[RMDB]
An RNA of 207 nucleotides, treated with 2A3 and DMS and read out base by base. 2A3 adducts were read by reverse transcription with SuperScript II with manganese. For 2A3, 6,440 sequencing reads were counted. DMS adducts were read by reverse transcription with MarathonRT. It was measured as part of the RMDB library ARCHII. Conditions: 150 mM KOAc, 10 mM MgCl2 and 150 mM bicine (pH 8.5), 24 C. High DMS reactivity at an A or C suggests that its Watson-Crick edge is free.
RNA sequence: GGGAACGACUCGAGUAGAGUCGAAAAAACCUGUUAUCAUUUGUGGCCUACAACAUUUGAUAACGGUCAUUUUAGUAGGAUAUACUCUACCAGCGCCCACUUGUAGAGUGAAUUUAAGGGCUUAGCUUAAUGUGUCUUGAUCAUCAGGCUACAUUAACAUAACAUUCUAGUUCGCUAGAAUGUUAUGAAAAGAAACAACAACAACAAC
Reactivity to 2A3 in 0.01 (KOAc 150mM, MgCl2 10mM, bicine 150mM(pH8.5), 24C), signal-to-noise 7, nucleotides 027 to 156: a000a010c010c000u020g000u000u000a010u000c000a010u010u010u000g000u000g010g000c000c000u010a010c000a020a000c010a010u000u000u000g000a000u000a010a000c010g010g080u170c090a130u080u140u110u270a020g000u000a000g000g010a000u010a000u000a010c000u000c000u000a000c010c010a010g010c010g010c050c000c000a060c000u000u000g000u000a000g000a000g000u010g000a020a030u120u220u270a130a160g000g010g010c030u060u150a030g000c000u020u020a010a000u010g010u010g010u020c030u080u150g110a200u190c110a120u130c030a070g000g000c020u050a010c010a010u020u010a020a010
Reactivity to DMS in 0.01 (KOAc 150mM, MgCl2 10mM, bicine 150mM(pH8.5), 24C), signal-to-noise 3, nucleotides 027 to 156: a140a070c020c010u000g010u020u000a010u000c000a010u000u000u000g000u000g010g000c050c010u000a070c030a060a040c010a020u000u000u000g010a030u000a010a000c010g040g030u010c100a090u010u020u000u010a120g030u000a040g000g000a060u000a300u000a300c030u000c010u010a010c000c060a050g020c030g000c030c020c020a270c060u020u010g020u010a020g000a070g040u000g000a160a030u000u000u010a100a130g010g000g030c040u000u000a040g000c050u000u000a020a030u000g010u000g010u000c080u000u000g010a150u000c090a070u020c010a020g010g000c000u000a020c100a030u010u000a060a170